The data come from the RNA Mapping Database (RMDB), library M2PK50. An RNA of 177 nucleotides, treated with 2A3 and DMS and read out base by base. The DMS profile rests on 1,968 reads. The 2A3 profile rests on 1,006 reads. The reactions ran in a buffer of 150 mM KOAc, 10 mM MgCl2 and 150 mM bicine (pH 8.5), at 24 C.

RNA sequence: GGGAACGACUCGAGUAGAGUCGAAAAGCUAGGCAUUUCGAUGCCUAGCGAGCGCAGAGUCUAUGCAUCUCUGAAUCACACAAGAGCCGUGUCUAUGCGUGGGAGUAUCCCUCUUCGGAGGGAUAAAUUACUGGUCCAGAUUCGUCUGGACCAGUAAAAAAGAAACAACAACAACAAC
Reactivity to 2A3 in 0.01 (KOAc 150mM, MgCl2 10mM, bicine 150mM(pH8.5), 24C), signal-to-noise 1, nucleotides 027 to 126: g000c000u010a000g000g010c010a020u050u060u070c230g100a010u010g030c000c000u010a010g010c000g000a010g000c030g000c020a030g010a000g040u000c030u080a070u110g010c040a240u030c030u010c010u080g130a160a110u220c090a070c010a000c040a270a020g010a020g060c050c040g010u020g030u070c030u000a020u050g010c030g020u030g090g080g010a050g050u000a010u000c030c050c000u010c040u120u010c190g140g000a050g000g010g000a010u000a000a000a000
Reactivity to DMS in 0.01 (KOAc 150mM, MgCl2 10mM, bicine 150mM(pH8.5), 24C), signal-to-noise 2, nucleotides 027 to 126: g010c000u000a000g000g020c000a010u010u010u010c160g000a020u000g010c000c000u000a000g020c000g000a050g000c060g000c020a030g000a060g000u000c040u010a060u010g010c130a120u010c020u000c050u000g010a140a110u020c180a080c160a090c110a070a050g000a040g020c200c070g000u000g000u000c030u010a060u000g010c030g010u000g010g000g000a080g010u000a030u000c010c000c000u000c000u000u010c190g030g000a030g000g010g010a000u000a020a050a080